[RMDB]
RNA sequence: GGGAACGACUCGAGUAGAGUCGAAAACGUCUCCGUGUGGUAGGACAGGUCCAGACGGCGCGAGUCCUUUGUGUUUGUGUCUGUCUCGUUGAAUCUCGGUGCCAAAACAAAGGGUGGUCCGAUUUGGCGAUAAGAAAUCAUUCGUGAUUUUUUAUCGAAAAGAAACAACAACAACAAC
Reactivity to 2A3 in 0.01 (KOAc 150mM, MgCl2 10mM, bicine 150mM(pH8.5), 24C), signal-to-noise 4, nucleotides 027 to 126: c010g030u010c020u000c010c000g020u100g000u030g030g020u020a020g000g020a020c030a010g020g020u000c010c000a000g010a020c010g010g010c020g000c010g030a010g050u030c000c000u010u030u050g040u000g020u000u030u010g020u010g030u010c010u020g030u000c010u010c030g020u010u090g040a040a040u020c010u010c020g010g010u040g010c000c000a010a010a010a040c030a020a070a020g050g010g010u040g010g010u000c020c010g010a040u040u000u030g030g030
Reactivity to DMS in 0.01 (KOAc 150mM, MgCl2 10mM, bicine 150mM(pH8.5), 24C), signal-to-noise 8, nucleotides 027 to 126: c100g010u010c010u000c010c020g010u010g020u010g000g010u010a060g000g010a060c070a060g010g010u010c010c040a040g000a050c030g000g010c150g010c050g000a090g010u000c020c010u010u020u010g010u010g010u010u010u010g010u010g000u010c020u010g000u000c010u000c070g020u010u010g000a070a110u010c050u010c040g010g010u020g000c040c060a020a020a070a080c150a050a070a100g000g010g010u010g000g010u010c010c010g000a130u010u000u010g000g010

Chemical mapping of a 177-nucleotide RNA with 2A3 and DMS. The RNA was probed in 150 mM KOAc, 10 mM MgCl2 and 150 mM bicine (pH 8.5) at 24 C. Reactivities are given for positions 27 through 126. The 2A3 profile rests on 8,705 reads.